[RMDB]
RNA sequence: GGGAACGACUCGAGUAGAGUCGAAAAGUUGACGAGCUGCGUGCGGCCGCUUCCGGUCCAAAAUCGCCAGACAGCUACCAGGAACGGGCCGCAGUUACCAGGCCCUGUACCAGGGUAGCGGUGACCGCUUCUUCACUUCCUUCGGGAAGUGAAGAAGAAAAGAAACAACAACAACAAC
Reactivity to DMS in 0.01 (KOAc 150mM, MgCl2 10mM, bicine 150mM(pH8.5), 24C), signal-to-noise 2, nucleotides 027 to 126: g000u000u010g010a090c090g000a090g010c130u000g020c050g010u010g020c080g000g020c040c000g010c220u010u010c120c120g000g000u000c060c130a000a120a070a150u000c080g010c020c030a130g030a020c080a150g010c010u010a010c000c000a120g000g000a110a080c080g000g000g000c000c000g010c110a100g010u000u020a050c130c080a240g020g000c010c000c000u020g000u020a060c070c000a180g030g030g010u000a030g000c010g000g000u000g000a100c040c030g000